[RMDB]
RNA sequence: GGGAACGACUCGAGUAGAGUCGAAAACUAUGCGACUUCGGUCGCAUAGAAAAGGUGCAUCGUACGGUACCGAAGUACGAUUAAAGCUCAAUAGAGCUAAAAAAAGCACGCCCUUCGGGGCGUGCAAGGAGAAUUAAGUGUUCGCACUUAAUUCUCCAAAAGAAACAACAACAACAAC
Reactivity to 2A3 in 0.01 (KOAc 150mM, MgCl2 10mM, bicine 150mM(pH8.5), 24C), signal-to-noise 1, nucleotides 027 to 126: c000u000a000u010g000c000g020a000c000u020u060c190g100g030u000c010g000c010a000u010a000g020a010a110a000a010g050g020u070g040c030a020u000c010g010u000a000c020g040g250u020a010c030c070g040a030a000g000u000a020c010g000a000u030u080a120a110a050g000c000u020c000a080a300u180a300g000a000g000c010u090a000a110a000a000a110a000a000g000c000a000c010g000c040c000c000u030u030c120g020g010g020g000c020g010u010g040c000a020a010
Reactivity to DMS in 0.01 (KOAc 150mM, MgCl2 10mM, bicine 150mM(pH8.5), 24C), signal-to-noise 2, nucleotides 027 to 126: c000u000a010u000g020c000g010a010c010u000u010c130g040g000u000c000g000c000a000u000a000g020a110a060a110a080g000g010u000g010c080a050u010c010g000u000a010c020g040g010u000a080c030c000g000a050a120g000u010a000c000g000a010u000u010a120a170a070g000c000u000c000a170a130u010a060g000a000g010c010u000a000a010a080a070a030a080a160g040c000a000c010g000c010c000c000u000u000c200g010g060g000g030c000g040u000g000c000a000a020